[RMDB]
RNA sequence: GGGAACGACUCGAGUAGAGUCGAAAAUAAGUAGUUAUUAUCAUUUGCAUUUAAAAAAAUAGUGGUCACUGAGGUCGGUGAACAUUUAGGUUCAUGGGCAGUAAGGUGAUGGUAUGCGUUAGCCCUAUCCAAUCAUCUCAUUCGUGAGAUGAUUGGAAAAAGAAACAACAACAACAAC
Reactivity to 2A3 in 0.01 (KOAc 150mM, MgCl2 10mM, bicine 150mM(pH8.5), 24C), signal-to-noise 2, nucleotides 027 to 126: u130a070a000g100u100a040g060u060u170a080u120u030a070u100c040a060u050u080u170g040c020a020u000u040u300a040a140a020a000a000a030a010u110a000g100u010g130g000u050c040a010c000u010g000a040g090g100u040c150g050g050u000g000a000a010c010a000u170u250u160a130g050g050u010u000c010a020u070g010g050g000c030a040g060u040a110a030g000g040u000g000a000u020g040g000u020a000u030g070c060g020u040u170a020g000c000c000c000u010a090
Reactivity to DMS in 0.01 (KOAc 150mM, MgCl2 10mM, bicine 150mM(pH8.5), 24C), signal-to-noise 2, nucleotides 027 to 126: u000a070a070g010u010a100g020u010u000a030u010u000a070u010c060a070u010u000u020g000c010a050u000u010u010a000a000a040a090a040a040a110u020a060g010u000g010g000u000c010a020c020u000g020a140g030g020u000c020g030g030u000g000a020a030c010a180u000u030u000a070g020g020u000u000c010a020u000g000g010g010c010a050g000u010a110a190g000g010u000g000a040u000g000g010u000a010u000g010c020g010u000u010a090g000c000c020c000u000a120
This 177-nucleotide RNA was probed chemically with 2A3 and DMS. The RNA was probed in 150 mM KOAc, 10 mM MgCl2 and 150 mM bicine (pH 8.5) at 24 C. For DMS, 2,186 sequencing reads were counted. Values cover nucleotides 27 to 126. DMS (dimethyl sulfate) methylates the pairing face of unpaired adenines and cytosines. It was measured as part of the RMDB library OK2TST. The 2A3 profile rests on 983 reads.